[RMDB]
RNA sequence: GGGAACGACUCGAGUAGAGUCGAAAAGAUAUGGAAAAGAUGCAUAGAUCAACCUGGACAACAGCGUACUGGGUCGGAAACGACCUUACGACAUGUCUUGGUUGAUCUAUGCAUCUUUUCCUAAGUCCAGUAAAGUUCUCUUCGGAGAACUUUACUGAAAAGAAACAACAACAACAAC
Reactivity to DMS in 0.01 (KOAc 150mM, MgCl2 10mM, bicine 150mM(pH8.5), 24C), signal-to-noise 3, nucleotides 027 to 126: g010a090u010a300u010g000g000a020a000a010a010g010a030u010g000c000a000u010a000g000a010u010c010a000a010c010c000u000g000g010a000c010a020a140c300a260g000c000g010u000a020c300u010g010g010g040u000c000g030g000a100a080a240c020g000a030c000c000u000u020a010c000g010a040c140a190u010g000u000c010u000u000g010g000u000u010g000a000u000c000u000a000u000g000c000a000u000c000u000u000u000u010c000c000u010a000a070g010u000c040
Chemical mapping of a 177-nucleotide RNA with DMS. DMS adducts were read by reverse transcription with MarathonRT. The RNA was probed in 150 mM KOAc, 10 mM MgCl2 and 150 mM bicine (pH 8.5) at 24 C.